[RMDB]
RNA sequence: GGGAACGACUCGAGUAGAGUCGAAAAGGGGACGACCUGGUUUCGACGUGGGUUGCAAAGCAGCGCAGGGCAUACCGAGGGCGGGCUACCUCGUAAAUACAACCUGAAAAAACUUAACUGCAAACGAUAACUCGUACGCACUGGCAGCUUAAUUGCUCUUUUUACCUCAGUUCGCUGAGGUAAAAAGAAAAGAAACAACAACAACAAC
Reactivity to 2A3 in 0.01 (KOAc 150mM, MgCl2 10mM, bicine 150mM(pH8.5), 24C), signal-to-noise 2, nucleotides 027 to 156: g010g000g000g000a010c030g020a040c020c010u020g050g060u030u030u100c060g060a050c060g060u130g000g000g030u100u070g070c080a040a000a110g010c030a000g010c030g010c100a050g000g000g030c050a070u060a050c020c030g000a000g000g050g010c070g000g000g030c050u040a070c010c010u030c000g040u080a000a000a090u080a020c050a040a100c050c000u080g000a130a000a080a030a000a000c060u140u080a080a030c040u030g000c060a230a010a050c050g020a050u060a120a010c040u020c070g050u040a010c060g040c050a080c030u020g090g000c020a010g000c020u070u080a030a080u150u090g010c010u000